[RMDB]
RNA sequence: GGGAACGACUCGAGUAGAGUCGAAAAGAAGGAUAGUUCGCUAUCCUUCAAACCCACCGAAAGGCAAAUGUGUUAGAUGCCCUCUAAGACAUAAACCGGGCAAAACAGUACCGUUCGCGGUACUGAACACACCUCUAAGGUUCGCCUUAGAGGUGUGAAAAGAAACAACAACAACAAC
Reactivity to 2A3 in 0.01 (KOAc 150mM, MgCl2 10mM, bicine 150mM(pH8.5), 24C), signal-to-noise 3, nucleotides 027 to 126: g000a000a000g000g010a000u000a000g020u050u020c070g000c070u000a000u000c010c000u010u010c000a000a010a010c010c010c000a020c020c030g150a160a030a040g060g000c060a120a130a050u030g040u010g050u030u010a030g000a060u280g030c000c050c000u010c010u020a020a030g080a020c010a020u070a050a030a030c020c010g000g030g000c020a030a020a070a070c000a010g000u000a010c010c010g010u020u070c220g020c010g120g000u000a000c000u020g000a010a000
Reactivity to DMS in 0.01 (KOAc 150mM, MgCl2 10mM, bicine 150mM(pH8.5), 24C), signal-to-noise 3, nucleotides 027 to 126: g010a020a000g000g010a000u000a010g010u010u010c210g000c000u000a000u000c010c000u010u000c010a020a090a110c010c000c000a140c190c140g000a060a100a120g010g000c060a060a250a060u000g020u000g010u000u010a030g000a050u000g010c240c200c040u000c030u000a010a020g000a040c010a030u000a030a110a120c020c040g010g020g020c140a050a060a080a130c000a000g000u000a000c000c000g030u000u010c180g020c010g020g000u000a000c010u000g000a060a100

This 177-nucleotide RNA was probed chemically with 2A3 and DMS. The RNA was probed in 150 mM KOAc, 10 mM MgCl2 and 150 mM bicine (pH 8.5) at 24 C. The data come from the RNA Mapping Database (RMDB), library M2PK50. High DMS reactivity at an A or C suggests that its Watson-Crick edge is free. Reactivities are given for positions 27 through 126. 2A3 adducts were read by reverse transcription with SuperScript II with manganese. For DMS the reverse transcriptase was MarathonRT.